The data come from the RNA Mapping Database (RMDB), library OK3TST. Structure probing data (2A3) for a 207-nucleotide construct. For 2A3 the reverse transcriptase was SuperScript II with manganese.
RNA sequence: GGGAACGACUCGAGUAGAGUCGAAAAGAGAGAGGGGAAGUGACUCACUCAAGGUCACACAGCUUAUGAGGGGCAGAGCUGGGAUUUGAAUCUAGGUCUGUGUGCCUGUAAACCACUGUCACCUGUCCCAGGAGGCUGAUGAUGUGGGGGUGACUCAGACAUGACUCCACUUCGGUGGAGUCAUGUCAAAAGAAACAACAACAACAAC
Reactivity to 2A3 in 0.01 (KOAc 150mM, MgCl2 10mM, bicine 150mM(pH8.5), 24C), signal-to-noise 1, nucleotides 027 to 156: g000a000g010a000g000a050g030g010g000g040a040a040g030u000g050a000c000u040c210a020c020u080c050a130a040g090g020u090c000a000c000a000c000a020g000c010u300u100a080u300g010a090g000g000g010g020c030a000g000a030g070c010u010g070g000g150a120u090u100u060g040a000a050u100c030u130a000g000g090u020c080u130g090u110g020u050g030c000c010u000g010u090a070a110a040c010c070a050c150u140g100u080c020a050c010c000u020g020u060c000c000c030a090g000g020a020g020g000c040u090g020a200u040g050a040u120g020u210g010g000g000g000g000u050g000a020c030u000c030a000